RNA sequence: GGGAACGACUCGAGUAGAGUCGAAAAACUAGGCUACAUAAAUGAGACCUAUUAUACCGGCUGAAACGGCAGUCCUCCCAGGAGCAAGUAAGGAGGGGAUGAGUUGAGGUUCAACCCUCCUAAGGACUACAUGAUAUGUAUUCGUACAUAUCAUGUAAAAAGAAACAACAACAACAAC
Reactivity to 2A3 in 0.01 (KOAc 150mM, MgCl2 10mM, bicine 150mM(pH8.5), 24C), signal-to-noise 9, nucleotides 027 to 126: a000c030u020a010g010g000c010u090a040c120a130u240a140a230a080u250g030a040g050a140c000c010u010a020u050u030a080u060a040c030c020g020g000c020u030g020a110a070a020c010g040g010c040a010g020u010c000c010u020c000c010c010a020g030g030a060g040c080a110a010g050u180a080a010g000g010a000g000g020g020g040a130u130g010a030g040u080u110g100a080g030g180u010u010c000a000a010c000c000c000u000c000c000u010a010a020g020g010a010c020
Reactivity to DMS in 0.01 (KOAc 150mM, MgCl2 10mM, bicine 150mM(pH8.5), 24C), signal-to-noise 9, nucleotides 027 to 126: a080c210u000a020g010g000c020u010a070c090a270u030a050a100a100u040g000a080g010a130c010c010u000a040u010u010a100u010a110c120c020g010g000c040u010g000a070a070a050c060g000g010c090a050g000u000c020c030u000c010c020c030a100g000g010a080g010c090a070a070g010u020a090a030g000g010a020g000g000g000g010a140u010g010a030g000u000u010g010a110g020g010u010u000c020a020a150c010c000c000u000c000c000u010a020a040g000g000a120c120

This 177-nucleotide RNA was probed chemically with 2A3 and DMS. For DMS the reverse transcriptase was MarathonRT. The reactions ran in a buffer of 150 mM KOAc, 10 mM MgCl2 and 150 mM bicine (pH 8.5), at 24 C. The data come from the RNA Mapping Database (RMDB), libraries RFM100 and RFMREP.